[RMDB]
RNA sequence: GGGAACGACUCGAGUAGAGUCGAAAAGUGCUAGUUCGCUAGCACAAAAACCGUAGGCUUCGAACUACUUCCUCGGAUAGCCUUUCGAUUUCGAAAGAGAUUUCGAGGUGCGGAGAGAAGCGAAGCCUAAACGGAAAAACAAUGGUUCGCCAUUGAACAUCUAUUGUAUCUUCGGAUACAAUAGAUGAAAAGAAACAACAACAACAAC
Reactivity to DMS in 0.01 (KOAc 150mM, MgCl2 10mM, bicine 150mM(pH8.5), 24C), signal-to-noise 3, nucleotides 027 to 156: g020u000g020c010u000a000g030u010u000c300g070c020u010a030g050c010a030c010a020a040a050a080a080c010c020g040u000a060g000g000c000u000u000c010g000a100a230c060u010a110c020u000u000c000c000u000c010g020g020a160u000a180g030c060c000u000u010u000c050g020a210u000u000u000c020g010a160a120a190g000a100g010a090u000u000u000c050g020a030g000g020u000g030c090g030g010a080g000a150g000a090a120g000c000g000a030a020g000c010c000u000a010a020a070c010g000g000a050a090a080a050a050c010a030a000u000g000g010u000u010c300g000c000c000a030u000u010g010a130a270
Reactivity to 2A3 in 0.01 (KOAc 150mM, MgCl2 10mM, bicine 150mM(pH8.5), 24C), signal-to-noise 6, nucleotides 027 to 156: g000u010g000c000u010a010g020u060u070c210g030c120u010a010g010c010a000c010a020a080a010a040a000c010c000g010u010a010g000g000c000u010u000c010g040a110a090c020u110a050c000u140u050c000c000u010c000g030g020a090u080a150g120c030c000u040u040u020c100g110a280u150u070u300c040g020a020a050a040g090a020g020a050u010u030u040c000g000a000g000g010u050g030c160g070g070a020g010a010g010a130a000g020c000g000a000a000g000c000c000u050a130a080a010c010g010g040a130a060a010a020a000c010a010a010u020g000g040u050u070c250g070c090c000a010u000u020g020a020a010